[RMDB]
RNA sequence: GGGAACGACUCGAGUAGAGUCGAAAAGUCAUGCCUUCGGGCAUGACAGGUACCGAGAGGUACCAAAUAGCGUACAGUAGACCCAGACUGUACGCUAAAAAAGUGUGUGUUCAAUAAGUUCCAAUUGAACACACACUAAAAUGGAGCAAGGGUGUGAAUGGUCAUAGUGAUUCGUCACUAUGACCAUAAAAGAAACAACAACAACAAC
Reactivity to DMS in 0.01 (KOAc 150mM, MgCl2 10mM, bicine 150mM(pH8.5), 24C), signal-to-noise 1, nucleotides 027 to 156: g000u000c000a000u000g000c020c010u000u000c170g070g030g060c020a000u010g000a000c020a000g020g010u000a030c000c020g000a300g030a300g010g040u010a000c000c010a030a030a150u010a030g020c000g040u000a010c010a040g020u000a070g010a160c030c020c000a300g060a060c000u000g050u000a000c000g080c000u000a000a010a060a080a020a020g030u010g060u000g000u000g010u000u000c000a010a000u000a060a100g040u000u000c030c000a140a050u010u010g000a020a020c000a020c010a000c010a000c010u000a010a020a100a100u010g030g020a150g010c010a100a120g000g010g050u000g040u000g000a190
Reactivity to 2A3 in 0.01 (KOAc 150mM, MgCl2 10mM, bicine 150mM(pH8.5), 24C), signal-to-noise 2, nucleotides 027 to 156: g000u000c000a010u000g000c000c030u050u070c190g050g000g020c000a010u000g000a000c000a000g000g020u020a000c020c010g020a020g010a000g100g020u010a000c000c040a010a010a010u070a010g000c000g000u000a010c000a000g010u030a010g030a090c010c000c000a000g020a000c000u020g000u000a000c000g000c000u000a000a000a000a010a000a010g020u010g000u000g010u000g000u000u000c000a010a020u070a140a080g120u100u000c030c020a020a010u000u000g000a000a000c000a000c000a000c000a000c000u000a000a000a000a020u130g050g000a040g070c170a130a120g070g030g000u050g010u050g100a100
Structure probing data (DMS and 2A3) for a 207-nucleotide construct. For 2A3, 1,972 sequencing reads were counted. DMS adducts were read by reverse transcription with MarathonRT. The reactions ran in a buffer of 150 mM KOAc, 10 mM MgCl2 and 150 mM bicine (pH 8.5), at 24 C. The DMS profile rests on 2,009 reads.